[RMDB]
RNA sequence: GGGAACGACUCGAGUAGAGUCGAAAAGGGAUAACCUCGGGAAACUGAGGCUAAUCCUGAAUAGCGUUCUCACCCUGGAGUGGGGAGAACGUGAAAUGCUCCGGCGCCAGAGGAUGUGGCUGCGGCCAGCCGUUUUCUGGUUCGCCAGAAAACGGCUAAAAGAAACAACAACAACAAC
Reactivity to DMS in 0.01 (KOAc 150mM, MgCl2 10mM, bicine 150mM(pH8.5), 24C), signal-to-noise 1, nucleotides 027 to 126: g000g020g000a010u000a090a150c000c000u010c010g000g040g000a180a170a110c010u020g000a000g010g000c040u000a090a130u010c010c000u000g040a030a130u090a290g000c000g000u000u000c000u010c000a210c000c000c010u000g060g050a090g030u000g000g030g000g000a000g000a000a000c000g000u000g000a060a140a100u010g000c090u010c020c100g000g040c070g020c020c060a030g000a070g030g000a020u000g000u000g000g010c000u000g000c200g020g000c030c080
Reactivity to 2A3 in 0.01 (KOAc 150mM, MgCl2 10mM, bicine 150mM(pH8.5), 24C), signal-to-noise 3, nucleotides 027 to 126: g010g000g000a000u020a010a000c000c000u010c000g050g000g000a100a010a010c010u000g000a000g000g000c020u050a070a130u020c000c000u020g000a000a050u020a020g020c010g000u000u000c040u040c050a300c000c000c020u150g080g290a210g170u300g040g030g010g020a000g000a000a000c000g000u020g000a030a010a030u170g020c020u000c050c020g020g020c020g010c000c000a030g030a030g090g080a080u090g030u080g130g000c050u060g020c030g050g000c010c000